[RMDB]
RNA sequence: GGGAACGACUCGAGUAGAGUCGAAAAAGCACGGUUUUUGAGGACGCAUUUUGUCCGUGCGGUAAUGCCCUCCUUUACACUUUCUCGCAUGGUGCGGGAGUGUGGAGAGGAAACAAAAGAUAGUCUCGAUAGGCGGUUAACUUCGGUUAACCGCCAACCGUCUCUAAACGUUCGCGUUUAGAGACGGAAAAGAAACAACAACAACAAC
Reactivity to 2A3 in 0.01 (KOAc 150mM, MgCl2 10mM, bicine 150mM(pH8.5), 24C), signal-to-noise 2, nucleotides 027 to 156: a000g010c000a010c010g010g050u000u040u020u000u020g080a160g000g020a010c020g030c080a080u020u000u000u000g010u000c000c000g000u000g020c010g000g060u200a050a020u240g020c010c010c010u060c000c000u060u070u030a010c010a000c000u050u110u040c000u050c040g010c020a110u240g230g040u290g170c020g000g010g000a010g000u010g000u000g000g000a060g000a010g000g000a010a040a010c020a000a000a000a000g140a070u080a010g010u020c000u000c060g070a110u110a120g000g000c000g000g000u000u000a000a000c000u040u050c070g000g000u000u000a000a000c000c000g000c000c000a000a000

Chemical mapping of a 207-nucleotide RNA with 2A3.
The RNA was probed in 150 mM KOAc, 10 mM MgCl2 and 150 mM bicine (pH 8.5) at 24 C.